[RMDB]
RNA sequence: GGGAACGACUCGAGUAGAGUCGAAAAAGUCCAUCGCCUCGGUACGCCGAGGCGAUUGACAAAGUGUUUUUCUCUCCACUUAAAUCGAAGAGAACAGGCUAGGUGCGUUACGACGCACCUAGCCUGAUGUGCGGUAAUCACUUCGGUGAUUACCGAAGCAUAUAACUGAGUUCGCUCAGUUAUAUGCAAAAGAAACAACAACAACAAC
Reactivity to 2A3 in 0.01 (KOAc 150mM, MgCl2 10mM, bicine 150mM(pH8.5), 24C), signal-to-noise 1, nucleotides 027 to 156: a000g000u020c010c000a000u000c010g010c010c000u000c000g000g020u070a070c240g050c010c000g000a000g020g020c000g000a000u000u010g000a000c010a010a050a010g010u010g020u050u040u000u000u000c010u000c020u020c010c000a040c050u170u270a000a030a060u080c050g040a080a040g000a000g000a020a030c010a000g000g030c010u010a000g060g010u030g000c010g070u010u090a050c290g060a010c000g100c000a000c000c010u020a000g020c020c000u010g000a000u010g020u050g060c040g000g000u000a000a000u000c000a010c000u040u020c180g140g000u010g000a000u000u000a000c010c000g000a010a000
An RNA of 207 nucleotides, treated with 2A3 and read out base by base. For 2A3, 915 sequencing reads were counted. The reactions ran in a buffer of 150 mM KOAc, 10 mM MgCl2 and 150 mM bicine (pH 8.5), at 24 C. 2A3 is a SHAPE reagent: it acylates the 2'-hydroxyl of flexible nucleotides of all four kinds. Values are in units of 0.01, from 0 to 300, in steps of 10. For 2A3 the reverse transcriptase was SuperScript II with manganese.